[RMDB]
Source: RMDB library OK3TST, as collected in RNAgym.
This 207-nucleotide RNA was probed chemically with 2A3.
2A3 adducts were read by reverse transcription with SuperScript II with manganese.
RNA sequence: GGGAACGACUCGAGUAGAGUCGAAAAUUGUGUCAUUUGUAUUCCAACAGCAAGUGGCACUAACUUUCGGGCAGUUGGAAUACCUGGAAGUGACUCAGUGCACCUAAUCUAUGUACUGAGUGAACUUGUCAACUAAGAUUAGGAGUUGGCAAGUGUAGUGACCGUUUUAUUUCGAUAAAACGGUCACAAAAGAAACAACAACAACAAC
Reactivity to 2A3 in 0.01 (KOAc 150mM, MgCl2 10mM, bicine 150mM(pH8.5), 24C), signal-to-noise 2, nucleotides 027 to 156: u050u020g000u000g000u010c010a000u060u000u000g060u090a080u240u200c160c060a050a010c010a130g020c000a000a050g000u000g030g010c000a000c000u000a010a030c010u000u040u030c000g000g000g000c040a100g060u030u130g130g070a070a080u140a140c010c010u000g020g010a000a000g040u030g050a020c000u000c000a000g000u010g010c020a010c030c090u090a080a120u090c030u160a040u040g010u000a010c000u000g000a000g000u040g000a000a000c000u010u010g000u000c000a000a000c000u020a020a080g120a300u180u280a090g210g000a030g030u000u000g000g000c000a010a010g000u000g080u120a090